Annotation:
The record gives the reactivity of an RNA of 177 nucleotides to 2A3 and DMS. Conditions: 150 mM KOAc, 10 mM MgCl2 and 150 mM bicine (pH 8.5), 24 C. The DMS profile rests on 2,109 reads.

RNA sequence: GGGAACGACUCGAGUAGAGUCGAAAAAGAACUAGCGAUAGUAAAAGGCUGUUUGCGCUAAGAUAUGGAAUUAGCGCAAAUAGGUCCGAAUUCCUUGAUAACAUUUCGGACAACCGCGCUAAAACAACUACUAGUAUGCGUUCGCGCAUACUAGUAGAAAAGAAACAACAACAACAAC
Reactivity to 2A3 in 0.01 (KOAc 150mM, MgCl2 10mM, bicine 150mM(pH8.5), 24C), signal-to-noise 3, nucleotides 027 to 126: a000g070a040a030c020u020a010g000c000g030a060u080a050g100u150a090a090a050a000g010g040c010u000g010u030u000u000g010c000g010c010u000a000a030g030a160u200a160u300g100g030a100a130u020u000a010g000c000g010c000a000a000a000u000a000g010g000u010c000c000g020a000a030u090u070c050c000u030u150g070a050u050a130a060c040a110u020u030u000c000g000g010a000c010a000a050c020c030g050c000g000c050u050a090a110a000a010c060a000a050
Reactivity to DMS in 0.01 (KOAc 150mM, MgCl2 10mM, bicine 150mM(pH8.5), 24C), signal-to-noise 3, nucleotides 027 to 126: a060g020a130a060c100u000a020g010c050g020a100u020a060g020u000a060a070a110a150g010g000c000u000g020u000u000u020g010c000g000c010u000a010a010g000a160u000a200u020g030g000a090a130u010u000a000g020c000g000c000a010a000a000u000a000g010g010u000c000c010g000a020a000u000u000c070c110u000u000g010a110u020a060a120c180a080u000u000u000c000g000g000a010c010a130a060c080c020g000c000g010c040u010a030a080a060a090c180a100a090

For 2A3 the reverse transcriptase was SuperScript II with manganese.